[RMDB]
RNA sequence: GGGAACGACUCGAGUAGAGUCGAAAAAAACAUCAGAAAAUCCUUUUGACUCUGACAUCAAAAGACAUCCAGAAUAUGACCCAUUUUUACAAUUCCUCUUGCUACAUAGCUGGCUCAAGCCACAAUCAUCUUAGAGCUAGAUUAAGAGCCUAGGUAAAUCACCAUUACUAUUCGUAGUAAUGGUGAUAAAAGAAACAACAACAACAAC
Reactivity to 2A3 in 0.01 (KOAc 150mM, MgCl2 10mM, bicine 150mM(pH8.5), 24C), signal-to-noise 4, nucleotides 027 to 156: a010a000a010c110a080u180c060a020g100a030a120a020a040u110c020c000u040u040u020u050g030a040c030u010c120u270g060a070c030a060u060c020a030a040a050a010g060a040c030a050u020c050c030a030g080a190a070u120a050u090g090a080c010c000c010a010u070u090u040u070u140a070c080a070a060u110u060c000c010u050c030u090u060g040c010u030a070c020a110u130a060g030c030u010g000g020c020u030c010a020a030g020c010c030a120c050a170a140u150c060a020u030c020u020u040a040g010a000g000c000u010a010g000a090u070u070a110a060g030a000g070c010c030u030a000g040g060u090a080a130
Reactivity to DMS in 0.01 (KOAc 150mM, MgCl2 10mM, bicine 150mM(pH8.5), 24C), signal-to-noise 1, nucleotides 027 to 156: a040a070a050c030a090u000c020a150g000a130a080a140a090u000c040c010u020u000u000u000g010a090c040u000c040u000g030a090c030a090u010c030a050a000a040a030g040a110c070a140u000c000c000a260g000a140a100u010a060u000g020a090c000c010c020a200u030u000u010u010u000a040c010a090a150u000u000c020c010u000c100u030u000g050c030u000a040c090a080u000a130g000c050u000g020g050c000u000c020a020a040g000c120c060a110c070a120a150u000c130a120u010c010u000u000a170g020a040g010c000u010a080g020a090u000u000a100a130g040a030g010c050c030u000a030g000g010u000a010a050